[RMDB]
RNA sequence: GGGAACGACUCGAGUAGAGUCGAAAAGGUGAGAGUGAUGAGUUGCACUAAUCAGUUGGGGCGUUUGAUGCAGUGGCAUCGAUGCCCCGAUCCGACCCGACCUGAGGACACACUGUGUGCACAGGGGUUUCGUUCCGAGUUUCGACUCGGAACGAAAAAAAGAAACAACAACAACAAC
Reactivity to DMS in 0.01 (KOAc 150mM, MgCl2 10mM, bicine 150mM(pH8.5), 24C), signal-to-noise 2, nucleotides 027 to 126: g000g060u030g000a090g000a100g060u000g000a180u010g000a180g050u010u030g050c080a050c010u000a040a120u090c040a140g040u000u010g000g020g000g000c040g040u000u000u090g060a000u000g000c000a300g010u040g000g030c000a000u000c000g000a000u000g010c000c000c000c010g000a020u010c010c030g000a130c020c010c000g010a270c020c010u030g000a130g040g000a070c010a040c030a190c220u000g020u000g000u010g000c010a200c040a010g000g030g000g010
Structure probing data (DMS) for a 177-nucleotide construct. Source: RMDB library RFM100, as collected in RNAgym.